[RMDB]
RNA sequence: GGGAACGACUCGAGUAGAGUCGAAAAGACGUUGUCGGUGCCGGCCUCCGGGUCCUGCCGGACCAUGAACGAGAGGCGGUAGGUGCCGGAGACGAGGUCGAGCGGGGUGUCCCCCGAGGCCCUGAGGCUUACGGCUGUUAUUCGUAACAGCCGUAAGAAAAGAAACAACAACAACAAC
Reactivity to 2A3 in 0.01 (KOAc 150mM, MgCl2 10mM, bicine 150mM(pH8.5), 24C), signal-to-noise 2, nucleotides 027 to 126: g030a020c010g020u020u030g090u160c000g020g030u000g040c020c010g070g010c010c030u040c010c020g010g000g010u000c000c040u080g240c130c200g020g020a010c010c000a110u200g120a110a050c080g030a030g000a020g300g020c060g010g060u070a090g020g000u010g030c010c000g000g000a020g000a000c000g000a010g020g050u040c040g030a070g090c050g010g020g030g030u210g140u220c030c000c000c000c030g040a020g050g030c030c000c040u060g080a030g100g000
Reactivity to DMS in 0.01 (KOAc 150mM, MgCl2 10mM, bicine 150mM(pH8.5), 24C), signal-to-noise 3, nucleotides 027 to 126: g000a100c020g000u000u010g010u010c010g010g010u010g010c020c000g000g010c010c010u000c020c010g010g020g000u000c010c010u010g050c300c250g020g000a030c020c020a120u000g020a110a300c060g010a130g020a050g000g010c000g010g000u020a040g020g030u000g020c010c010g000g000a070g010a040c020g000a080g000g010u000c030g020a150g000c030g010g010g000g000u010g000u000c090c000c000c040c030g010a160g000g000c010c010c030u000g010a180g000g010